[RMDB]
RNA sequence: GGGAACGACUCGAGUAGAGUCGAAAAGAUAUGGAACAACUACCCACCUGUAUACAGCGUUGAAAUCGGAAACGAUGGAGCUGAUACAGAGGUUGUUCCUAAGUCAAAAGAUAGGUUCGCCUAUCAAUCACGUAUAUUCCUUCGGGAAUAUACGUGAAAAAGAAACAACAACAACAAC
Reactivity to DMS in 0.01 (KOAc 150mM, MgCl2 10mM, bicine 150mM(pH8.5), 24C), signal-to-noise 3, nucleotides 027 to 126: g000a140u020a180u000g000g010a010a000c000a030a010c010u000a110c000c000c020a300c080c000u000g000u000a000u000a070c000a020g010c000g000u020u000g030a180a070a020u010c000g020g000a080a090a100c000g000a020u000g020g000a120g020c000u000g010a050u000a000c000a000g000a090g010g000u020u000g020u010u000c000c000u010a030a090g000u010c130a050a070a080a070g000a010u000a010g000g000u000u010c160g020c010c000u000a010u000c000a120a110
Reactivity to 2A3 in 0.01 (KOAc 150mM, MgCl2 10mM, bicine 150mM(pH8.5), 24C), signal-to-noise 2, nucleotides 027 to 126: g090a040u230a130u300g000g000a000a000c000a000a000c000u190a270c030c010c000a030c000c030u000g040u000a020u030a120c000a000g000c020g300u300u070g010a030a040a000u000c000g000g040a060a050a040c000g000a010u010g000g030a020g020c010u000g000a000u000a010c000a020g000a000g010g000u000u000g010u000u000c000c000u010a050a020g120u040c100a120a100a010a080g020a010u020a010g010g060u070u090c260g120c070c000u030a010u010c000a000a050